RNA sequence: GGGAACGACUCGAGUAGAGUCGAAAAAUGUGUGUCCGGAGUUAGAAAGCAGAUUAGACGACAUGACAUUCUCUGACAUUCAGAAAGAGUUUCCGCAUGUCAUCGAAAUGGUAGAUAUAGAACAAUUUACUUUUAGUAACGUAUGUGAAUCGGUUCACCUAUGUCAAACGUUCGCGUUUGACAUAGGAAAAGAAACAACAACAACAAC
Reactivity to DMS in 0.01 (KOAc 150mM, MgCl2 10mM, bicine 150mM(pH8.5), 24C), signal-to-noise 3, nucleotides 027 to 156: a070u000g020u010g010u000g000u010c040c010g010g000a090g040u000u000a120g000a120a080a130g030c030a040g020a100u020u010a190g020a130c000g010a020c020a040u010g010a050c100a040u000u010c010u000c020u010g000a290c080a140u000u010c230a200g000a090a140a030g010a110g020u000u000u000c050c060g060c000a000u010g000u000c000a020u010c020g000a060a050a080u000g010g030u000a060g030a140u000a140u010a090g010a020a110c040a040a020u000u000u010a020c010u000u010u020u000a090g020u010a050a090c160g030u000a080u010g030u000g010a050a130u000c060g000g020u000u000c020a210
Reactivity to 2A3 in 0.01 (KOAc 150mM, MgCl2 10mM, bicine 150mM(pH8.5), 24C), signal-to-noise 4, nucleotides 027 to 156: a000u100g020u010g000u010g040u060c030c050g040g010a060g010u050u070a040g100a120a060a010g080c030a000g020a030u020u080a020g040a060c020g000a000c000a010u010g040a040c000a030u080u020c010u000c000u020g030a050c060a160u200u120c080a100g060a040a100a010g010a030g020u000u020u080c060c040g000c030a010u010g010u000c010a030u010c010g010a000a040a020u030g010g030u020a030g030a110u050a010u030a140g100a040a010c070a060a060u070u100u090a080c060u060u140u060u100a060g030u080a060a040c090g050u060a060u230g020u010g030a040a030u060c060g030g020u070u050c010a030
Description:
The record gives the reactivity of an RNA of 207 nucleotides to DMS and 2A3. DMS adducts were read by reverse transcription with MarathonRT. Reactivities are given for positions 27 through 156.